[RMDB]
RNA sequence: GGGAACGACUCGAGUAGAGUCGAAAACGAAGGGUAUACGCGUAAUGGCAGCAUUCAGGUUGAUCCCACCGGGCAACUGACAAUUCAGGGGCAUCCGGUGAUAGGCGAGGCUGGGCCAAUUGCUGUACUGGUGGAUUAUAUUCGUAUAAUCCACCAGAAAAGAAACAACAACAACAAC
Reactivity to 2A3 in 0.01 (KOAc 150mM, MgCl2 10mM, bicine 150mM(pH8.5), 24C), signal-to-noise 6, nucleotides 027 to 126: c030g050a040a040g120g020g010u090a060u030a110c060g020c020g050u100a070a070u090g050g010c010a020g010c020a030u050u100c030a020g080g010u090u060g040a040u050c010c010c000a000c010c000g000g020g010c000a010a010c010u010g030a020c090a200a250u250u070c000a030g000g000g020g010c000a060u080c010c010g000g010u000g010a060u090a040g040g000c050g020a010g020g010c030u030g020g030g000c000c020a020a040u060u060g010c010u030g020u050a080
Reactivity to DMS in 0.01 (KOAc 150mM, MgCl2 10mM, bicine 150mM(pH8.5), 24C), signal-to-noise 8, nucleotides 027 to 126: c080g000a110a090g000g000g010u000a050u010a070c110g010c060g010u010a060a110u000g000g020c020a050g010c050a070u000u000c120a090g000g010u000u010g010a160u010c040c050c010a040c030c020g010g010g000c010a010a020c000u000g010a060c300a080a160u010u000c020a010g000g000g000g000c010a080u010c020c010g000g010u000g000a080u010a060g010g010c060g000a120g010g000c040u000g010g000g010c050c040a050a070u000u000g010c020u000g010u000a150

Background:
Conditions: 150 mM KOAc, 10 mM MgCl2 and 150 mM bicine (pH 8.5), 24 C. An RNA of 177 nucleotides, treated with 2A3 and DMS and read out base by base. 2A3 adducts were read by reverse transcription with SuperScript II with manganese. For 2A3, 10,592 sequencing reads were counted. For DMS, 14,227 sequencing reads were counted. For DMS the reverse transcriptase was MarathonRT.